[RMDB]
RNA sequence: GGGAACGACUCGAGUAGAGUCGAAAAACUCGUAUACGUACGAGAAUGCAUUUUAGCCAAGUGCUCAGAUGCUUGUGGUGGCUGCUUAUGCACCACGAAUGCUUGAGCAUGUGCUAUGGUACCUAAACCUAUCGUAUGGCUUCGGCCAUACGAUAGGAAAAGAAACAACAACAACAAC
Reactivity to DMS in 0.01 (KOAc 150mM, MgCl2 10mM, bicine 150mM(pH8.5), 24C), signal-to-noise 2, nucleotides 027 to 126: a070c010u000c000g000u000a030u010a130c140g060u000a000c000g020a020g030a090a120u020g000c080a110u000u000u000u010a000g000c030c100a090a240g030u000g000c020u030c020a000g010a020u010g010c030u000u000g020u000g000g000u000g010g050c040u000g000c290u060u030a090u000g030c000a030c000c000a010c020g020a020a040u020g010c030u020u020g020a020g000c000a020u000g010u000g000c010u000a000u000g000g010u000a130c030c000u010a060a050a130
Reactivity to 2A3 in 0.01 (KOAc 150mM, MgCl2 10mM, bicine 150mM(pH8.5), 24C), signal-to-noise 8, nucleotides 027 to 126: a000c010u000c000g000u000a020u010a040c300g030u010a000c010g000a000g040a020a050u150g020c070a110u100u060u050u150a010g000c010c030a280a180g050u010g010c000u000c010a170g300a300u150g020c000u030u060g010u000g000g050u020g120g100c010u050g020c050u220u210a140u300g010c000a000c000c000a000c000g090a080a030u170g000c020u030u020g000a000g000c000a000u000g030u030g000c000u010a020u040g050g010u060a070c000c010u040a070a070a080
This 177-nucleotide RNA was probed chemically with DMS and 2A3. DMS (dimethyl sulfate) methylates the pairing face of unpaired adenines and cytosines. For DMS the reverse transcriptase was MarathonRT. 2A3 is a SHAPE reagent: it acylates the 2'-hydroxyl of flexible nucleotides of all four kinds.